[RMDB]
RNA sequence: GGGAACGACUCGAGUAGAGUCGAAAAGGUGUGUGCAUCUGUGCCGAGGGCUUCGGGGGCCCCGACUGCGCCACCAAGCUGGAUGGCGGGCAGCUGGUCUGGGAGACCCUCAUGGACAGCCGCCUCUCAGCCGUGAGUUGUGGGUACCCGCUGUCUACCUUCAUCAAUGAUUCGUCAUUGAUGAAGGAAAAGAAACAACAACAACAAC
Reactivity to 2A3 in 0.01 (KOAc 150mM, MgCl2 10mM, bicine 150mM(pH8.5), 24C), signal-to-noise 3, nucleotides 027 to 156: g010g000u040g020u040g020u040g020c020a060u070c070u200g100u120g140c080c040g060a220g030g000g000c040u110u100c090g040g000g000g040g050c000c000c010c020g000a020c030u060g010c040g060c010c010a030c020c020a040a010g030c040u050g040g030a120u130g030g040c070g020g030g020c040a060g070c020u060g050g020u040c030u020g010g020g020a210g020a110c030c030c000u040c030a060u150g040g000a000c010a010g020c020c010g000c010c000u000c010u010c000a000g020c020c020g060u060g090a100g000u030u050g020u220g020g050g000u080a140c010c020c000g030c020u000g010u000c010u010a050
Reactivity to DMS in 0.01 (KOAc 150mM, MgCl2 10mM, bicine 150mM(pH8.5), 24C), signal-to-noise 2, nucleotides 027 to 156: g000g030u000g020u010g010u000g020c020a060u000c110u090g010u000g030c000c060g010a150g020g010g000c040u000u000c060g040g040g000g040g010c020c010c010c050g000a030c000u000g010c060g000c010c010a020c010c020a050a090g020c080u000g030g010a110u000g020g030c050g010g100g050c020a060g030c020u020g040g000u000c020u000g010g000g000a130g020a160c140c040c010u000c030a050u020g010g020a070c000a040g020c040c030g020c010c000u000c020u000c030a070g010c030c000g050u000g060a140g020u010u000g010u000g020g020g000u000a070c000c000c020g000c020u000g020u000c000u000a130
Chemical mapping of a 207-nucleotide RNA with 2A3 and DMS. 2A3 adducts were read by reverse transcription with SuperScript II with manganese.